RNA sequence: GGGAACGACUCGAGUAGAGUCGAAAAGGAGGCCCGCCGCGACUACAUCCGCGACUGCGUCUACCUCUACCUCUGCCACACCUGGCAGACGGGCAUGGGCGUGUGGCAGCAGUGUCUGGAGGAGCAGAACCUGAAAGAGCUCUGCAAGCUCCUGCAAAUACGUUAUAAAGUUCGCUUUAUAACGUAUAAAAGAAACAACAACAACAAC
Reactivity to 2A3 in 0.01 (KOAc 150mM, MgCl2 10mM, bicine 150mM(pH8.5), 24C), signal-to-noise 8, nucleotides 027 to 156: g020g000a010g000g020c000c010c010g000c020c010g020c010g030a050c040u300a060c090a120u070c090c000g000c010g030a030c030u040g030c050g040u020c010u100a240c010c010u000c010u050a070c000c000u020c000u010g000c000c010a040c020a050c040c040u050g100g000c020a040g050a100c130g050g070g000c090a200u190g040g040g020c090g020u060g010u030g080g000c020a020g000c030a020g070u080g040u100c110u090g020g010a020g000g010a010g000c010a010g000a030a030c010c020u070g050a090a120a030g050a050g000c020u010c010u030g010c030a050a110g050c000u000c000c000u020g000c000a050a100
Reactivity to DMS in 0.01 (KOAc 150mM, MgCl2 10mM, bicine 150mM(pH8.5), 24C), signal-to-noise 4, nucleotides 027 to 156: g010g020a090g020g010c010c050c110g010c030c010g020c010g030a200c040u000a130c100a300u000c040c010g020c010g020a040c000u000g000c030g020u010c030u000a070c020c010u000c020u000a120c030c010u000c010u000g030c000c000a030c020a110c120c090u010g030g000c000a060g010a060c070g030g010g000c080a080u010g010g020g010c060g000u000g030u000g000g000c020a050g020c080a060g010u010g010u000c070u010g000g010a100g010g010a250g030c000a040g010a030a060c020c010u000g010a140a130a180g010a070g010c020u000c010u010g000c020a160a180g000c010u000c010c020u000g010c050a060a190
Notes: Conditions: 150 mM KOAc, 10 mM MgCl2 and 150 mM bicine (pH 8.5), 24 C. Structure probing data (2A3 and DMS) for a 207-nucleotide construct. It was measured as part of the RMDB library OK3TST. For DMS the reverse transcriptase was MarathonRT.